Structure probing data (2A3 and DMS) for a 177-nucleotide construct.

[RMDB]
RNA sequence: GGGAACGACUCGAGUAGAGUCGAAAAAAGUGGCAUAGUGGAACAAAUGGAGUGUCAUCUGCCAUCGUUGCAGCGGUUGAACUUGUUACAAUGGUUCACCAUCAUUGUCAAUAUCUGGUUAAUAUGACUACAACGAGUGGUUCGCCACUCGUUGUAGAAAAGAAACAACAACAACAAC
Reactivity to 2A3 in 0.01 (KOAc 150mM, MgCl2 10mM, bicine 150mM(pH8.5), 24C), signal-to-noise 1, nucleotides 027 to 126: a000a020g080u010g010g000c030a010u130a070g130u080g010g070a120a050c060a100a130a090u080g090g000a070g050u080g060u020c010a050u000c020u030g000c000c000a080u030c070g060u100u050g020c000a000g120c000g030g000u090u060g000a040a050c030u000u110g020u280u230a060c150a030a090u090g030g020u000u080c010a030c050c000a010u090c000a010u000u100g070u000c010a050a050u040a090u160c070u080g080g050u010u060a160a030u130a030u210g080a100
Reactivity to DMS in 0.01 (KOAc 150mM, MgCl2 10mM, bicine 150mM(pH8.5), 24C), signal-to-noise 2, nucleotides 027 to 126: a110a070g030u000g000g000c020a050u020a060g020u000g000g020a070a070c080a050a110a060u010g020g000a090g030u020g010u000c040a050u000c090u010g010c030c010a020u000c150g000u000u020g030c050a080g000c190g020g010u000u000g010a090a100c050u000u010g010u020u010a030c130a070a060u010g010g000u000u010c110a020c100c080a080u000c060a080u000u000g010u010c060a050a060u020a050u000c110u000g010g000u000u030a060a120u000a050u000g010a180

Overview:
For 2A3 the reverse transcriptase was SuperScript II with manganese. For DMS, 1,512 sequencing reads were counted.